[RMDB]
RNA sequence: GGGAACGACUCGAGUAGAGUCGAAAACUCUGGCCUACCUUAAGAACGGGAUAGUUCUUCAGGCUGUUUGCGGGUUCCGUUAGGUGGCGCUGUAGAGGCCACUCGGGCUCGACACUGCGUUACCUCGCACUUAGGUAUGCUUCGGCAUACCUAAGUGAAAAGAAACAACAACAACAAC
Reactivity to DMS in 0.01 (KOAc 150mM, MgCl2 10mM, bicine 150mM(pH8.5), 24C), signal-to-noise 5, nucleotides 027 to 126: c030u000c040u020g020g000c020c030u010a130c040c030u010u010a030a020g000a020a020c010g000g010g030a120u040a090g010u010u000c000u000u000c170a030g010g000c130u010g000u010u020u020g010c120g020g000g010u000u000c010c010g000u020u020a040g010g020u000g010g000c010g000c020u000g010u010a070g000a160g000g000c000c000a110c220u020c160g000g010g000c010u010c010g020a090c120a020c090u020g000c010g010u000u020a010c010c000u000c160g020
Reactivity to 2A3 in 0.01 (KOAc 150mM, MgCl2 10mM, bicine 150mM(pH8.5), 24C), signal-to-noise 7, nucleotides 027 to 126: c020u020c040u040g090g000c010c010u030a000c020c000u030u030a000a010g000a010a010c030g090g040g190a140u180a110g000u020u000c000u010u000c020a020g020g020c030u070g070u100u160u150g060c060g000g010g000u080u120c020c000g040u100u140a040g000g030u010g010g000c040g000c050u020g020u050a040g040a070g050g070c000c000a080c080u180c070g070g010g000c050u040c030g030a040c020a010c060u050g000c010g010u010u030a060c000c010u010c020g020